An RNA of 177 nucleotides, treated with DMS and 2A3 and read out base by base.
In probing experiments dimethyl sulfate is read out at A N1 and C N3, which are open when not base-paired.
The RNA was probed in 150 mM KOAc, 10 mM MgCl2 and 150 mM bicine (pH 8.5) at 24 C.
DMS adducts were read by reverse transcription with MarathonRT.
RNA sequence: GGGAACGACUCGAGUAGAGUCGAAAACACCCGCAAUUCGUUGCGGGUGAGAGCACCACUCCUGCGGGAGUUAAGGCCAUACGGACUGCCGGGUGCAAAGCCAUAGCAGGUCCUUCGGGACCUGCAAUUAGUAUUACACUUUCGAGUGUAAUACUAAAAAAGAAACAACAACAACAAC
Reactivity to DMS in 0.01 (KOAc 150mM, MgCl2 10mM, bicine 150mM(pH8.5), 24C), signal-to-noise 6, nucleotides 027 to 126: c010a010c000c000c000g020c000a010a020u000u010c140g020u000u000g020c010g010g010g010u000g000a020g010a110g010c010a020c010c010a090c010u000c010c000u000g030c180g030g000g000a020g010u000u010a090a110g010g010c010c080a200u010a090c160g020g010a120c140u010g010c030c020g000g010g000u000g010c020a040a050a140g010c020c020a080u010a090g010c000a010g000g020u000c000c000u000u010c170g030g010g010a010c000c000u000g000c000a000a010
Reactivity to 2A3 in 0.01 (KOAc 150mM, MgCl2 10mM, bicine 150mM(pH8.5), 24C), signal-to-noise 5, nucleotides 027 to 126: c010a010c000c010c000g000c010a010a040u070u080c180g080u070u020g000c010g000g000g000u000g000a010g010a000g000c010a000c020c000a010c000u010c000c000u050g010c270g070g010g000a010g010u030u180a070a030g010g000c010c010a090u110a260c120g100g050a070c090u060g020c000c010g030g010g000u000g020c000a050a050a000g030c010c010a100u160a040g000c000a000g000g020u010c010c000u040u100c210g050g000g010a000c000c000u000g000c000a000a000
The DMS profile rests on 10,253 reads.